[RMDB]
RNA sequence: GGGAACGACUCGAGUAGAGUCGAAAAUGGGUGAUUUGUUGUUCUAUAGUGGCUAAACACUUUAUGGUUUCUGUUAAAUAUAUAUGCGUGAGAAAAAUUAGCAUUCAAAUCUAUAAAAGUUAGAUGACUAUAGGUAAAUGUUCGCAUUUACCUAUAGAAAAGAAACAACAACAACAAC
Reactivity to 2A3 in 0.01 (KOAc 150mM, MgCl2 10mM, bicine 150mM(pH8.5), 24C), signal-to-noise 2, nucleotides 027 to 126: u090g030g000g000u010g030a030u030u010u010g010u010u010g020u030u010c020u050a090u050a130g040u030g030g000c080u100a020a110a040c020a020c020u080u040u020a110u110g010g040u000u050u000c030u000g030u060u040a050a050a090u180a000u060a010u030a030u240g010c010g040u130g050a080g140a040a210a010a020a010u090u110a010g000c000a000u090u070c060a000a100a150u020c020u070a070u030a130a120a020a000g050u080u050a030g000a030u050g020a070
Reactivity to DMS in 0.01 (KOAc 150mM, MgCl2 10mM, bicine 150mM(pH8.5), 24C), signal-to-noise 3, nucleotides 027 to 126: u030g000g000g010u000g010a090u030u000u010g010u020u000g000u000u020c130u020a070u010a040g030u000g000g000c070u010a050a080a090c050a100c030u010u010u010a050u020g010g020u000u000u000c080u000g000u010u010a040a050a060u030a060u020a060u030a070u000g010c040g010u020g000a110g000a090a040a110a090a050u020u010a060g000c010a030u020u010c120a020a050a050u010c010u000a040u010a040a070a050a170g010u010u000a020g010a070u010g000a240